[RMDB]
The data come from the RNA Mapping Database (RMDB), library OK3TST. Structure probing data (DMS and 2A3) for a 207-nucleotide construct. For 2A3 the reverse transcriptase was SuperScript II with manganese.
RNA sequence: GGGAACGACUCGAGUAGAGUCGAAAACUCUCCUGUAUGGCGGUACAGCCGUACCGAAACUCCACGGCUGUGGAGGCAUACAGAUCGUAGUAGCGAUGUGAUGGCACUACUCGCGUAGUGAAGGUGAACGCGAGUUCACCCAUCACGAGAGACUACGCGAUGCUACAUUGUUCGCAAUGUAGCAUCGAAAAGAAACAACAACAACAAC
Reactivity to DMS in 0.01 (KOAc 150mM, MgCl2 10mM, bicine 150mM(pH8.5), 24C), signal-to-noise 2, nucleotides 027 to 156: c060u000c000u030c040c000u000g020u000a000u000g020g060c030g010g020u000a060c020a300g010c140c180g000u000a050c000c040g030a130a120a230c050u000c020c020a000c000g020g040c260u000g040u000g000g000a020g030g010c020a030u000a020c000a070g000a050u020c000g020u000a030g010u010a030g020c030g040a180u010g030u000g000a120u000g010g080c050a050c030u020a100c000u000c100g060c250g020u140a150g030u020g040a050a050g000g010u020g020a050a020c050g000c300g010a250g020u000u000c020a100c090c040c000a080u000c000a080c030g030a030g030a100g020a080c030u000a030c080g010
Reactivity to 2A3 in 0.01 (KOAc 150mM, MgCl2 10mM, bicine 150mM(pH8.5), 24C), signal-to-noise 4, nucleotides 027 to 156: c010u010c000u000c010c000u000g010u010a010u010g080g030c010g010g060u050a000c010a120g250c100c140g040u020a020c010c000g090a190a090a050c020u030c040c020a020c040g280g000c260u220g030u010g010g070a020g000g000c000a010u000a010c000a000g020a000u030c000g020u020a170g020u030a030g120c030g020a070u070g040u000g000a000u010g010g000c020a020c090u020a000c000u030c030g040c050g010u020a040g070u050g250a180a070g080g060u120g080a060a010c000g000c020g010a010g020u050u030c050a080c040c010c000a010u000c010a000c000g000a010g000a000g000a010c020u040a040c010g030

About this RNA
Reactivities are given for positions 27 through 156. The 2A3 profile rests on 3,294 reads.